Chemical mapping of a 177-nucleotide RNA with DMS and 2A3. Values cover nucleotides 27 to 126. DMS (dimethyl sulfate) methylates the pairing face of unpaired adenines and cytosines. Conditions: 150 mM KOAc, 10 mM MgCl2 and 150 mM bicine (pH 8.5), 24 C. The 2A3 profile rests on 3,164 reads.

RNA sequence: GGGAACGACUCGAGUAGAGUCGAAAAGGCACACUCCUGUAAUCCCAGCUACUGGGGAGGCUGAGGCAGGAGAAUCGCUUGAACCGGGAGGAGGAGGCUGCAGUGAGCCAAGAUCACACCACUGCACCUCCCUCAGCUAUUUCGAUAGCUGAGGGAGAAAAGAAACAACAACAACAAC
Reactivity to DMS in 0.01 (KOAc 150mM, MgCl2 10mM, bicine 150mM(pH8.5), 24C), signal-to-noise 3, nucleotides 027 to 126: g000g020c020a130c190a100c030u000c000c000u000g000u010a120a170u000c030c000c010a040g000c040u000a060c090u000g000g010g010g000a200g000g010c010u000g010a070g000g020c020a010g010g020a010g020a050a050u010c150g020c020u000u010g000a090a100c070c030g010g020g000a090g010g000a050g020g000a050g000g020c220u000g000c020a030g000u010g010a100g010c070c060a070a110g000a070u010c060a090c120a100c070c000a010c000u010g010c020a100c100
Reactivity to 2A3 in 0.01 (KOAc 150mM, MgCl2 10mM, bicine 150mM(pH8.5), 24C), signal-to-noise 2, nucleotides 027 to 126: g010g010c030a040c020a030c100u010c000c000u010g020u100a090a210u120c010c030c010a010g030c020u140a100c090u130g000g050g020g010a050g050g000c020u020g020a020g020g060c020a000g010g010a020g040a010a040u070c050g000c020u010u050g020a040a040c020c010g030g000g000a050g000g040a050g010g010a030g020g000c060u030g000c000a010g010u000g020a030g070c030c020a020a020g030a060u120c000a020c010a020c100c010a020c010u030g010c010a010c010